[RMDB]
RNA sequence: GGGAACGACUCGAGUAGAGUCGAAAAACCGUCAGCGCACGGUUGGUGAGCAUCGUCGACGACUGCGCUCAGCACCUCGGGCAGGCCGCCUACCUGCGGGGGAUAGCCCGAUAACGGCGACAUCCGCCUGAGAGUGACAUUUCGAUGUCACUCUCAGAAAAGAAACAACAACAACAAC
Reactivity to 2A3 in 0.01 (KOAc 150mM, MgCl2 10mM, bicine 150mM(pH8.5), 24C), signal-to-noise 7, nucleotides 027 to 126: a000c030c000g030u040c060a070g070c010g010c060a020c060g010g020u020u040g040g060u090g040a040g020c050a100u120c050g070u030c020g050a090c070g020a050c040u040g010c020g020c070u040c030a020g030c020a030c010c020u030c020g000g050g000c030a050g040g090c000c020g060c010c020u080a090c020c020u060g020c030g010g000g000g000g010a080u090a050g020c010c010c000g020a050u110a110a020c050g000g000c000g010a020c020a070u030c010c030g030c000
Reactivity to DMS in 0.01 (KOAc 150mM, MgCl2 10mM, bicine 150mM(pH8.5), 24C), signal-to-noise 4, nucleotides 027 to 126: a050c000c010g000u010c030a150g000c180g040c070a020c050g000g020u010u000g040g010u000g000a040g010c050a080u010c220g000u000c020g010a130c120g000a070c070u000g000c130g000c030u000c060a050g000c030a070c060c070u020c070g000g020g010c030a070g020g010c030c070g000c010c040u030a130c060c090u000g000c030g000g010g000g020g000a080u030a170g000c010c000c010g000a100u040a040a110c170g000g000c030g000a150c160a070u020c070c010g050c050
The record gives the reactivity of an RNA of 177 nucleotides to 2A3 and DMS.
It was measured as part of the RMDB library OK1LIB.
For 2A3 the reverse transcriptase was SuperScript II with manganese.
The reactions ran in a buffer of 150 mM KOAc, 10 mM MgCl2 and 150 mM bicine (pH 8.5), at 24 C.
The 2A3 profile rests on 8,576 reads.
High DMS reactivity at an A or C suggests that its Watson-Crick edge is free.